[RMDB]
RNA sequence: GGGAACGACUCGAGUAGAGUCGAAAAGUUAAACAAUUUAUGGGUAGUCAUUUAGAAGAUGAUGCGCCAUGUGUUGAAGAGAACGCAAUUAUUCGUGACUUGGAUAUUAUGAAACCAAUCGAUGAGGCGAACGCCUGCUAUUCGUAGCAGGCGUUCGAAAAGAAACAACAACAACAAC
Reactivity to 2A3 in 0.01 (KOAc 150mM, MgCl2 10mM, bicine 150mM(pH8.5), 24C), signal-to-noise 1, nucleotides 027 to 126: g050u100u070a080a080a020c110a000a110u000u300u160a010u000g170g000g000u070a070g130u120c000a000u000u070u000a250g040a110a110g080a130u080g000a050u110g040c300g080c000c000a000u000g000u000g000u000u030g270a030a090g000a000g040a150a000c080g000c000a000a280u000u000a070u070u090c010g000u000g080a010c150u040u000g000g050a000u000a000u070u120a190u200g050a160a100a000c000c000a030a000u160c000g000a000u080g000a050g090g000
Reactivity to DMS in 0.01 (KOAc 150mM, MgCl2 10mM, bicine 150mM(pH8.5), 24C), signal-to-noise 1, nucleotides 027 to 126: g000u030u000a000a230a030c000a020a010u130u000u030a040u000g010g000g000u030a300g000u000c000a000u000u000u020a180g000a280a300g010a010u000g000a010u070g000c240g030c070c000a000u000g000u000g000u000u000g040a070a090g000a130g000a150a070c050g020c090a070a090u060u000a000u030u000c000g000u000g000a110c110u030u000g000g070a150u000a020u020u090a040u020g000a070a010a170c000c020a050a170u000c060g000a090u040g000a020g000g000

An RNA of 177 nucleotides, treated with 2A3 and DMS and read out base by base. 2A3 adducts were read by reverse transcription with SuperScript II with manganese. Conditions: 150 mM KOAc, 10 mM MgCl2 and 150 mM bicine (pH 8.5), 24 C. For DMS, 1,157 sequencing reads were counted. DMS adducts were read by reverse transcription with MarathonRT.